[RMDB]
Description: Source: RMDB library OK3TST, as collected in RNAgym. The record gives the reactivity of an RNA of 207 nucleotides to 2A3. As a SHAPE reagent, 2A3 marks flexible, mostly unpaired nucleotides at the ribose 2'-OH. The reactions ran in a buffer of 150 mM KOAc, 10 mM MgCl2 and 150 mM bicine (pH 8.5), at 24 C.
RNA sequence: GGGAACGACUCGAGUAGAGUCGAAAAUGCACAGCCAAAUUCUACCAAAGCUACAAAGUACUGGUACCAAUGCCCGCUGCAAUGCUUCCAAAACUUCAAUGAGAAGGGAAGCCUCCCUGACUCAUUCUACAGUGCCAGUAUUAUUCUGAUACUAAAACCUAUUUAGUCGCUUCGGCGACUAAAUAGGAAAAGAAACAACAACAACAAC
Reactivity to 2A3 in 0.01 (KOAc 150mM, MgCl2 10mM, bicine 150mM(pH8.5), 24C), signal-to-noise 1, nucleotides 027 to 156: u060g000c030a000c100a080g030c050c040a060a040a000u080u000c010u060a050c020c000a070a130a070g010c040u090a120c060a130a300a000g020u000a010c000u000g010g020u060a010c030c020a050a070u070g030c000c010c010g000c030u020g000c020a100a050u030g050c000u110u040c020c030a060a060a090a060c050u160u050c090a070a250u080g000a130g000a000a040g040g010g000a040a010g070c020c000u040c000c000c000u040g110a200c030u000c020a010u120u000c000u020a040c000a030g010u000g130c020c000a000g040u010a000u010u010a020u180u040c060u010g060a110u060a170c050u000a000a020a110a080